[RMDB]
RNA sequence: GGGAACGACUCGAGUAGAGUCGAAAAAGAAACACAAAUUUUCGGUCCAGUUUCUGCCGGUUUCACAGAUACACAUCCUGUUGUACGUGAAGCGACUGUACGUGCAAUGAUUCAUUUGGCACCAAAAUCGAGGAGGAGUGUUCGCACUCCUCCUCGAAAAAGAAACAACAACAACAAC
Reactivity to DMS in 0.01 (KOAc 150mM, MgCl2 10mM, bicine 150mM(pH8.5), 24C), signal-to-noise 1, nucleotides 027 to 126: a090g000a060a000a050c200a220c160a220a230a090u000u000u000u070c060g060g040u000c030c040a170g000u000u000u000c010u000g000c010c030g040g010u040u010u000c000a160c080a070g000a080u000a010c040a000c000a060u040c240c170u000g000u000u000g000u000a010c070g010u000g010a030a160g000c100g030a040c100u030g000u050a000c090g000u000g000c000a030a030u000g000a020u000u000c140a040u030u000u000g000g020c050a000c020c110a020a000a120a060
Reactivity to 2A3 in 0.01 (KOAc 150mM, MgCl2 10mM, bicine 150mM(pH8.5), 24C), signal-to-noise 2, nucleotides 027 to 126: a000g090a010a080a000c200a010c070a050a140a140u120u140u140u160c020g000g000u000c010c000a110g020u040u010u020c040u000g050c010c000g080g020u000u030u030c080a060c010a030g030a020u020a000c010a010c000a070u240c110c000u190g020u160u050g000u070a000c000g000u010g060a040a000g020c010g120a000c070u070g020u170a050c000g000u010g030c000a020a090u080g090a190u160u070c010a020u050u040u060g130g000c000a000c030c000a020a020a090a110